RNA sequence: GGGAACGACUCGAGUAGAGUCGAAAAUUUAUCGGGAUGACAACGGAACAAGCGCGGUACGAUUUUGGUGUCGUCUUUACCAAACAGUUUUUCGGGAAGGUGUUAGUUGUCAGUCUCACGAGCGGCCAUUCCUAGGCAGAUUCGUCUGCCUAGGAAUAAAAGAAACAACAACAACAAC
Reactivity to DMS in 0.01 (KOAc 150mM, MgCl2 10mM, bicine 150mM(pH8.5), 24C), signal-to-noise 3, nucleotides 027 to 126: u030u010u000a100u000c090g010g000g000a080u000g000a000c000a020a030c010g000g020a070a050c070a090a150g020c140g000c080g000g000u020a030c040g000a200u000u010u000u040g000g000u000g020u000c050g020u010c110u000u010u000a140c020c020a060a090a090c210a140g020u000u000u000u030u010c150g000g010g000a110a050g010g010u010g000u000u010a130g000u000u010g010u000c010a030g020u000c030u000c030a090c080g010a040g010c120g020g000c070c050
Reactivity to 2A3 in 0.01 (KOAc 150mM, MgCl2 10mM, bicine 150mM(pH8.5), 24C), signal-to-noise 1, nucleotides 027 to 126: u080u130u040a110u060c060g030g000g000a000u010g000a020c010a000a000c000g070g000a070a000c040a100a000g000c050g020c050g150g000u010a000c020g040a190u080u080u190u240g200g010u050g050u050c040g030u000c030u020u030u130a060c010c000a030a000a060c070a070g020u050u070u000u300u160c050g010g030g030a040a030g060g000u070g030u100u040a030g010u020u000g000u010c010a000g110u000c020u040c040a030c000g040a030g090c030g050g000c040c000
This 177-nucleotide RNA was probed chemically with DMS and 2A3. Reactivities are rounded to 0.1 and cut off at 0 and 3. It was measured as part of the RMDB library OK2TST. DMS adducts were read by reverse transcription with MarathonRT.